Structure probing data (2A3) for a 207-nucleotide construct. 2A3 adducts were read by reverse transcription with SuperScript II with manganese. The reactions ran in a buffer of 150 mM KOAc, 10 mM MgCl2 and 150 mM bicine (pH 8.5), at 24 C.

RNA sequence: GGGAACGACUCGAGUAGAGUCGAAAAAGACUUAAGUGCAUGUGAGCUGGUAAGCUCUAAAACUACCACAAAUAAAUAAACGCAAACAACGCAAAUUACGCUCCAGCUUACGCAAAAGUCGCGUAAGUUUAUCACACUUUUGGAGUCGGCUUAAGAAUCUGACACAAGCGUUCGCGCUUGUGUCAGAAAAAGAAACAACAACAACAAC
Reactivity to 2A3 in 0.01 (KOAc 150mM, MgCl2 10mM, bicine 150mM(pH8.5), 24C), signal-to-noise 1, nucleotides 027 to 156: a000g140a010c000u040u000a040a040g020u000g060c000a030u110g060u020g080a000g010c020u000g030g000u130a220a040g000c020u020c050u040a000a000a000a000c000u020a040c000c030a020c020a010a000a000u130a020a110a000u130a030a090a000c000g000c020a000a100a050c040a070a000c020g030c000a050a060a060u210u090a040c070g000c000u030c000c000a000g000c000u020u000a000c000g030c040a030a100a070a000g160u150c020g000c000g000u000a000a000g000u000u070u000a050u100c060a030c060a080c140u100u230u040u000g010g000a000g060u050c060g000g020c010u000u040a030a000g000a000a060